Source: RMDB library OK3TST, as collected in RNAgym. The record gives the reactivity of an RNA of 207 nucleotides to 2A3 and DMS.
RNA sequence: GGGAACGACUCGAGUAGAGUCGAAAAACCCUACCUUGUGGAAGUCUUAGCUUACGUAGACGCAUUAGCUGGGGUGAAAUUGACGGGGAACUUCGUGAACGGGUUUAUCACCGGUCACUUGAUACGCACGAAACCCAAAAAUCUAACGUACGAUUCACUUACUCAGGUUGUUCGCAACCUGAGUAAGAAAAGAAACAACAACAACAAC
Reactivity to 2A3 in 0.01 (KOAc 150mM, MgCl2 10mM, bicine 150mM(pH8.5), 24C), signal-to-noise 2, nucleotides 027 to 156: a020c010c000c000u020a060c000c030u050u110g040u050g060g120a200a080g020u040c030u050u070a070g040c050u120u050a010c020g030u020a020g020a090c000g050c050a060u050u090a000g000c010u020g000g010g110g000u010g060a000a070a120u080u080g020a040c040g000g000g030g020a020a070c010u160u070c040g000u000g000a060a010c010g000g000g040u020u150u160a070u050c010a030c080c020g090g070u050c010a000c020u030u000g010a010u050a140c020g050c020a020c050g110a080a170a250c000c000c000a020a010a000a000a070u100c110u080a130a000c030g030u060a000c010g090a080u070u070c050a000
Reactivity to DMS in 0.01 (KOAc 150mM, MgCl2 10mM, bicine 150mM(pH8.5), 24C), signal-to-noise 1, nucleotides 027 to 156: a050c010c010c000u020a110c040c020u000u000g040u000g000g020a050a120g030u000c020u050u040a140g030c010u000u000a070c090g000u000a070g030a110c040g010c050a100u000u010a080g020c040u000g040g020g130g000u000g030a070a070a110u000u000g020a200c090g010g000g010g000a050a110c080u000u000c080g060u000g010a000a050c030g030g000g000u000u010u000a140u010c200a080c000c000g000g000u000c000a000c050u010u030g000a150u000a080c020g060c010a070c030g000a050a050a110c030c010c040a040a050a000a110a070u000c040u010a000a080c090g020u020a060c040g000a200u010u000c050a030

The reactions ran in a buffer of 150 mM KOAc, 10 mM MgCl2 and 150 mM bicine (pH 8.5), at 24 C. Values are in units of 0.01, from 0 to 300, in steps of 10.